RNA sequence: GGGAACGACUCGAGUAGAGUCGAAAAACAUGGGCAGCACCAACAAGAUGAUCGCGCGCACGCUCGGCAUCAGCGAAGGCACGGUCAAGAUCCAUCUGGCCAGCAUCUUCCAGCAGUUGGGCGCGAAGGUAUACCAGGACUUCGGUCCUGGUAUACCAAAAGAAACAACAACAACAAC
Reactivity to 2A3 in 0.01 (KOAc 150mM, MgCl2 10mM, bicine 150mM(pH8.5), 24C), signal-to-noise 1, nucleotides 027 to 126: a020c050a070u110g000g030g030c030a050g000c000a100c070c000a000a060c010a040a100g030a080u140g020a100u070c010g040c000g000c010g010c030a040c140g000c030u000c010g020g000c010a080u050c090a080g070c030g060a010a000g000g000c050a000c140g010g000u010c070a090a020g030a010u100c080c020a040u010c030u030g000g000c000c000a020g010c030a060u030c020u040u020c000c000a060g040c030a000g040u100u000g020g000g000c040g030c000g020a090a050
Reactivity to DMS in 0.01 (KOAc 150mM, MgCl2 10mM, bicine 150mM(pH8.5), 24C), signal-to-noise 2, nucleotides 027 to 126: a120c060a110u000g010g000g040c040a070g020c030a080c020c030a010a030c020a080a140g000a110u000g000a070u010c010g010c080g010c020g000c190a090c140g000c010u000c070g030g010c060a050u000c050a110g040c080g030a030a070g000g050c050a060c120g040g010u020c000a080a050g010a100u010c160c110a080u010c030u020g020g000c030c000a040g000c160a150u000c000u000u010c000c080a160g040c020a050g010u000u000g030g010g020c040g010c110g010a080a020
Conditions: 150 mM KOAc, 10 mM MgCl2 and 150 mM bicine (pH 8.5), 24 C. The record gives the reactivity of an RNA of 177 nucleotides to 2A3 and DMS. It was measured as part of the RMDB library OK2TST. 2A3 adducts were read by reverse transcription with SuperScript II with manganese. The DMS profile rests on 935 reads. High DMS reactivity at an A or C suggests that its Watson-Crick edge is free.